[RMDB]
RNA sequence: GGGAACGACUCGAGUAGAGUCGAAAACGGUCGCGGCGCGCCGAGGGCCCGACGCCUGGCGGAGAAUCAGGGUUCGACUCCGGAGAGCGGGCCUGCGAGACGGCCCGCACAUCCAAGGACGGCAGCAUUGGCUGACACAUUUCGAUGUGUCAGCCAAAAAAGAAACAACAACAACAAC
Reactivity to DMS in 0.01 (KOAc 150mM, MgCl2 10mM, bicine 150mM(pH8.5), 24C), signal-to-noise 1, nucleotides 027 to 126: c050g000g000u020c070g030c160g010g030c000g020c090g030c010c020g030a090g000g020g020c010c110c050g000a040c240g060c030c010u000g000g010c120g000g010a070g000a300a030u050c080a170g010g020g000u000u000c030g000a190c110u030c080c000g000g000a150g000a020g020c010g000g000g010c030c000u000g030c170g000a120g000a160c110g000g070c000c000c000g050c000a000c060a050u000c000c060a030a060g010g010a260c070g000g030c070a150g040c050a150